[RMDB]
RNA sequence: GGGAACGACUCGAGUAGAGUCGAAAACACGUCGUGAAGGUGAUCUUCCGGCUUAUUGGGCUGAUCCCACCAAAGCUGCGGAACAACUGGGCUGGCGAGUCAGCCGCUCGCUGGACGAAAUGGCGGCGACGUUAUACAUCUUCGGAUGUAUAACGUCAAAAGAAACAACAACAACAAC
Reactivity to DMS in 0.01 (KOAc 150mM, MgCl2 10mM, bicine 150mM(pH8.5), 24C), signal-to-noise 6, nucleotides 027 to 126: c090a160c110g010u000c020g020u020g020a090a070g010g020u010g010a140u000c040u000u000c020c010g000g000c020u000u000a090u010u000g000g010g020c090u010g010a150u000c030c000c020a120c070c080a050a070a090g010c010u000g000c080g010g000a070a080c120a100a080c070u010g010g010g010c030u000g020g000c010g010a050g010u000c050a150g010c080c140g000c010u000c030g020c000u000g010g010a050c060g000a040a090a070u000g010g010c020g010g000c080
Reactivity to 2A3 in 0.01 (KOAc 150mM, MgCl2 10mM, bicine 150mM(pH8.5), 24C), signal-to-noise 6, nucleotides 027 to 126: c060a010c030g020u010c010g040u090g170a070a030g070g090u150g090a120u090c020u020u000c020c000g000g000c000u040u090a170u100u140g060g010g000c060u070g040a090u090c020c010c000a010c010c010a060a070a010g020c040u100g020c030g070g040a080a070c030a040a040c070u080g040g170g040c020u010g000g010c010g000a010g040u040c070a030g060c060c010g010c000u010c010g000c010u030g000g020a020c010g050a070a040a060u100g050g010c020g010g020c050